[RMDB]
RNA sequence: GGGAACGACUCGAGUAGAGUCGAAAAAAACGGUAACGGACAGCCUGUAUUACUUCAACACCCACUACAGCGCUCCCAACCGCAACGUGACCGGGCAGAUGAUUGCCGGUCAUGCGCUGAUCCUGGGAGGUCCCAUAAGAUUCGUCUUAUGGGACCUAAAAGAAACAACAACAACAAC
Reactivity to DMS in 0.01 (KOAc 150mM, MgCl2 10mM, bicine 150mM(pH8.5), 24C), signal-to-noise 4, nucleotides 027 to 126: a020a030a060c050g000g010u020a100a060c170g000g000a080c100a030g020c030c000u000g000u010a060u010u000a060c180u000u010c100a090a070c120a140c030c010c000a050c120u010a040c050a030g000c090g000c010u000c000c000c020a060a110c120c020g000c090a060a100c090g020u010g010a010c000c010g000g040g060c010a030g000a150u050g000a120u030u000g030c000c010g000g000u000c010a010u000g010c080g010c090u000g000a120u000c020c040u000g010g030g000
Reactivity to 2A3 in 0.01 (KOAc 150mM, MgCl2 10mM, bicine 150mM(pH8.5), 24C), signal-to-noise 5, nucleotides 027 to 126: a000a000a000c090g000g030u120a110a040c080g040g050a050c080a040g030c000c000u060g040u030a120u030u100a080c100u080u090c030a090a020c020a090c040c010c010a030c000u040a020c010a020g020c050g000c100u020c000c000c000a040a100c020c010g000c030a080a070c060g020u010g000a010c000c000g030g130g050c060a060g040a200u280g050a140u150u200g080c000c000g020g000u000c000a000u020g010c060g000c020u030g010a050u020c010c010u030g020g070g000
The record gives the reactivity of an RNA of 177 nucleotides to DMS and 2A3. Conditions: 150 mM KOAc, 10 mM MgCl2 and 150 mM bicine (pH 8.5), 24 C. For DMS the reverse transcriptase was MarathonRT. It was measured as part of the RMDB library OK1LIB. The DMS profile rests on 6,420 reads. For 2A3, 3,361 sequencing reads were counted.